RNA sequence: GGGAACGACUCGAGUAGAGUCGAAAACGUGACGUCGACAUGGCGCGUACCGAUCGGCGCGAUCCUCGUAGUACUCGAUCUCACGCUGGCCCAGUACGGAUCUAGCGCGCGCGAGUCGGCCAGCGGCAGUGGUUGCAGUGUUCGCACUGCAACCACUAAAAGAAACAACAACAACAAC
Reactivity to DMS in 0.01 (KOAc 150mM, MgCl2 10mM, bicine 150mM(pH8.5), 24C), signal-to-noise 1, nucleotides 027 to 126: c120g010u000g020a090c060g010u020c080g030a130c130a130u030g020g020c080g000c000g020u000a090c100c130g000a040u000c000g020g050c020g010c020g000a020u000c080c050u000c140g000u000a130g060u010a030c160u010c060g000a070u000c020u000c070a090c000g010c000u000g000g020c070c010c070a230g000u000a030c050g000g000a080u010c090u010a060g000c090g000c070g000c000g020c090g000a070g000u000c100g010g000c010c010a070g010c010g020g010c180
Reactivity to 2A3 in 0.01 (KOAc 150mM, MgCl2 10mM, bicine 150mM(pH8.5), 24C), signal-to-noise 1, nucleotides 027 to 126: c050g040u060g060a030c030g020u070c000g070a070c080a180u170g130g010c020g000c000g060u040a040c000c040g000a030u000c000g030g010c040g000c010g020a050u090c010c070u070c080g090u110a080g050u010a050c040u000c060g010a080u000c020u000c040a070c010g000c010u010g030g000c020c000c000a010g050u060a030c080g020g000a020u040c010u090a040g070c000g000c000g020c020g000c030g100a020g060u060c020g020g030c000c000a010g000c000g000g030c060